[RMDB]
RNA sequence: GGGAACGACUCGAGUAGAGUCGAAAAUGUGUCUCCUUCGGGAGACACAAACGCUCGCAGCCCGAGGCCGCACGGGCAAGGCAGGGGCCAGCCAGCGAGCUAUGUGUUAUCAAUUCGUUGAUAACAAAUCAAUCGGAGUAUUCGUACUCCGAUUGAUAAAAGAAACAACAACAACAAC
Reactivity to 2A3 in 0.01 (KOAc 150mM, MgCl2 10mM, bicine 150mM(pH8.5), 24C), signal-to-noise 1, nucleotides 027 to 126: u060g010u000g000u010c000u020c020c000u010u090c210g080g000g000a020g030a000c010a000c010a000a010a010c030g010c000u000c020g060c050a060g000c000c000c010g020a080g010g050c040c020g060c010a040c040g080g060g000c090a080a100g000g000c030a040g050g010g020g040c030c010a010g020c000c020a000g000c010g010a010g010c000u060a130u120g170u000g000u000u000a000u010c010a030a020u030u080c210g010u080u030g000a000u000a000a000c000a000a090
Reactivity to DMS in 0.01 (KOAc 150mM, MgCl2 10mM, bicine 150mM(pH8.5), 24C), signal-to-noise 3, nucleotides 027 to 126: u010g010u000g010u000c010u000c010c000u010u000c220g020g000g010a010g010a010c000a000c000a010a090a080c140g000c000u000c020g010c030a300g010c020c000c010g000a090g000g010c030c020g010c080a130c060g000g000g030c060a100a070g000g010c020a070g010g010g000g010c030c070a120g000c030c010a180g020c010g030a010g020c020u000a050u010g020u000g010u000u000a020u000c010a020a050u000u000c170g010u000u000g000a010u000a000a010c000a060a120

Structure probing data (2A3 and DMS) for a 177-nucleotide construct. For DMS, 2,256 sequencing reads were counted. For 2A3, 2,156 sequencing reads were counted. For 2A3 the reverse transcriptase was SuperScript II with manganese. DMS (dimethyl sulfate) methylates the pairing face of unpaired adenines and cytosines. The reactions ran in a buffer of 150 mM KOAc, 10 mM MgCl2 and 150 mM bicine (pH 8.5), at 24 C.